About this RNA:
Structure probing data (2A3 and DMS) for a 177-nucleotide construct. 2A3 adducts were read by reverse transcription with SuperScript II with manganese. Values are in units of 0.01, from 0 to 300, in steps of 10. It was measured as part of the RMDB library OK1LIB.
RNA sequence: GGGAACGACUCGAGUAGAGUCGAAAAAUUUAAGCCUUGGCAACGUGUUCAACCAAGUCGACAACUCUGGUAGAGUAACCGUAUUCGUUGUCGUACCAGGAAACCAACUUGACGAACUUUGGAGACACGUAGCAUCAUAGUUCGCUAUGAUGCUACGAAAAGAAACAACAACAACAAC
Reactivity to 2A3 in 0.01 (KOAc 150mM, MgCl2 10mM, bicine 150mM(pH8.5), 24C), signal-to-noise 5, nucleotides 027 to 126: a010u160u160u100a070a010g030c010c010u030u020g040g000c010a040a050c070g050u050g040u090u020c040a090a060c040c000a050a000g030u020c010g040a020c000a070a030c010u000c050u120g090g000u090a070g010a090g230u120a040a030c030c000g050u040a090u140u110c030g020u040u030g030u030c010g000u000a040c020c020a000g050g040a000a040a020c030c010a020a030c040u040u060g010a020c020g030a120a090c000u080u030u120g050g000a020g000a010c010a010
Reactivity to DMS in 0.01 (KOAc 150mM, MgCl2 10mM, bicine 150mM(pH8.5), 24C), signal-to-noise 3, nucleotides 027 to 126: a100u010u020u020a080a140g020c070c000u000u000g000g000c030a050a050c090g050u020g010u000u020c090a120a130c030c020a020a080g000u000c000g000a060c040a080a040c110u020c040u020g020g020u020a090g000a090g020u050a070a030c120c160g000u020a060u020u010c170g010u000u000g010u030c030g020u000a030c000c020a050g010g020a090a030a080c180c090a040a100c120u010u010g000a040c050g010a050a050c040u030u010u000g010g010a140g000a110c120a080